[RMDB]
RNA sequence: GGGAACGACUCGAGUAGAGUCGAAAAAGAUAUGGAACUUAGGGAGCGUGGAGUACGGGCGUUGAUCGAUCGUCGGAAACGACGAUCGGGAGCCUAAAACACGCGAAGAACUAAGUUCCUAAGUCAACUAAUGGACCUAGUUCGCUAGGUCCAUUAGAAAAGAAACAACAACAACAAC
Reactivity to 2A3 in 0.01 (KOAc 150mM, MgCl2 10mM, bicine 150mM(pH8.5), 24C), signal-to-noise 1, nucleotides 027 to 126: a000g040a050u100a060u150g000g000a000a000c000u020u010a030g020g000g020a050g020c000g000u030g020g110a110g130u110a110c130g000g040g010c040g230u300u040g010a010u010c030g000a000u010c000g000u000c000g020g040a040a050a060c020g000a020c000g000a000u020c010g000g000g000a000g020c000c000u010a020a010a000a020c010a000c010g020c000g040a050a040g020a000a010c000u000a020a010g000u000u000c000c000u000a010a000g030u010c000a040a030
Reactivity to DMS in 0.01 (KOAc 150mM, MgCl2 10mM, bicine 150mM(pH8.5), 24C), signal-to-noise 3, nucleotides 027 to 126: a120g000a050u020a300u010g010g000a040a010c000u000u010a000g000g000g000a080g020c010g020u000g010g010a090g030u000a080c300g010g000g000c000g020u010u010g030a040u010c010g000a000u000c000g030u000c000g020g000a070a070a190c010g010a010c020g010a010u000c000g000g000g010a030g030c000c000u000a000a060a180a140c020a020c000g010c000g010a080a070g010a160a160c000u000a010a010g030u000u000c000c000u000a020a100g000u010c040a160a230
Description:
An RNA of 177 nucleotides, treated with 2A3 and DMS and read out base by base. The RNA was probed in 150 mM KOAc, 10 mM MgCl2 and 150 mM bicine (pH 8.5) at 24 C. For 2A3, 3,687 sequencing reads were counted. The DMS profile rests on 3,059 reads. DMS adducts were read by reverse transcription with MarathonRT. Source: RMDB library TTRDES, as collected in RNAgym.